[RMDB]
RNA sequence: GGGAACGACUCGAGUAGAGUCGAAAAGAUAUGGAUGAUGUACCGAGCUCCUCGGAAACGAGAAGAGCCUAGACAGUACCUCAUCCUAAGUCAAAGUCUGGUCUGUUCUUCGGAACAGACCAGACAACCUAUCUUUGUGGUUCGCCACAAAGAUAGGAAAAGAAACAACAACAACAAC
Reactivity to 2A3 in 0.01 (KOAc 150mM, MgCl2 10mM, bicine 150mM(pH8.5), 24C), signal-to-noise 2, nucleotides 027 to 126: g040a040u070a050u160g000g000a010u010g010a010u000g010u010a000c010c030g000a030g000c010u010c010c000u000c010g020g050a060a050a030c010g020a010g030a300a140g000a020g000c000c000u060a100g040a070c050a070g010u000a010c000c020u000c000a000u020c000c000u010a110a030g000u030c050a100a030a020g010u000c010u010g000g000u010c000u000g020u000u000c000u010u090c300g030g000a000a000c000a000g010a000c000c000a000g010a000c010a000a000
Reactivity to DMS in 0.01 (KOAc 150mM, MgCl2 10mM, bicine 150mM(pH8.5), 24C), signal-to-noise 4, nucleotides 027 to 126: g010a010u000a300u010g000g010a010u000g020a000u000g010u000a000c000c050g010a130g010c000u000c000c000u010c010g020g000a060a040a160c010g010a000g010a120a100g000a020g020c010c300u010a040g010a050c300a120g010u000a000c000c030u000c000a000u000c000c000u000a030a050g010u000c030a100a120a120g010u000c000u000g000g000u000c000u000g010u000u000c000u000u010c210g020g000a010a010c010a000g000a000c000c000a020g000a000c010a010a020